An RNA of 177 nucleotides, treated with 2A3 and read out base by base. The data come from the RNA Mapping Database (RMDB), library M2PK50. The reactions ran in a buffer of 150 mM KOAc, 10 mM MgCl2 and 150 mM bicine (pH 8.5), at 24 C.

RNA sequence: GGGAACGACUCGAGUAGAGUCGAAAACAUUGCAGCUUCGGCUGCAAUGAAUCUCUGGUCUGUACGACUCUACUCGAUAGAGGCUGGAGUAGUCGUUCCCGAUGGCGCCCCAAUUCGUUGGGGCGAACCGACCAAUAUGAUUCGUCAUAUUGGUCGGAAAAGAAACAACAACAACAAC
Reactivity to 2A3 in 0.01 (KOAc 150mM, MgCl2 10mM, bicine 150mM(pH8.5), 24C), signal-to-noise 2, nucleotides 027 to 126: c000a010u000u000g000c000a000g010c010u080u100c260g170g000c010u000g000c030a000a000u020g010a000a000u020c050u020c020u090g030g060u010c040u080g130u140a100c040g020a000c020u000c000u000a000c000u000c010g000a000u020a010g010a000g020g000c020u040g050g000a040g040u120a010g000u010c000g000u000u000c000c000c000g010a040u040g090g130c010g000c010c010c020c000a010a020u050u100c190g080u040u030g000g000g000g010c010g000a000a000